[RMDB]
RNA sequence: GGGAACGACUCGAGUAGAGUCGAAAAAAGACGUGUUCGUACACUUCUCUGCUAUCCAGAACGAUGGCUACAAAUCCCUGGACGAAGGUCAGAAAGUAUCCUUCACCAUCGAAAGCGGCGCUAAAGGUGUGUGACAAAUGUUCGCAUUUGUCACACAAAAAGAAACAACAACAACAAC
Reactivity to 2A3 in 0.01 (KOAc 150mM, MgCl2 10mM, bicine 150mM(pH8.5), 24C), signal-to-noise 3, nucleotides 027 to 126: a010a010g090a020c100g040u050g000u080u200c090g040u110a000c000a010c050u040u020c020u000c030u020g000c000u020a050u030c030c080a060g050a090a030c040g030a020u020g000g000c000u090a030c020a040a020a080u090c020c000c000u050g010g040a020c090g040a060a000g020g000u080c040a010g200a080a110a010g090u090a060u050c000c000u000u020c000a000c000c020a020u040c030g090a010a000a050g050c050g050g040c000g020c120u110a010a050a100g100g000
Reactivity to DMS in 0.01 (KOAc 150mM, MgCl2 10mM, bicine 150mM(pH8.5), 24C), signal-to-noise 2, nucleotides 027 to 126: a100a040g000a010c050g000u010g000u000u000c100g030u030a050c050a040c050u000u000c010u000c060u000g010c070u000a060u000c050c160a090g000a090a150c170g030a010u000g020g010c070u060a040c170a030a080a050u000c010c000c000u010g000g040a110c080g000a040a060g000g010u010c120a160g010a160a060a090g000u030a090u000c020c020u000u030c050a100c020c010a060u000c040g000a040a110a040g000c040g000g020c010g020c030u000a040a090a030g000g010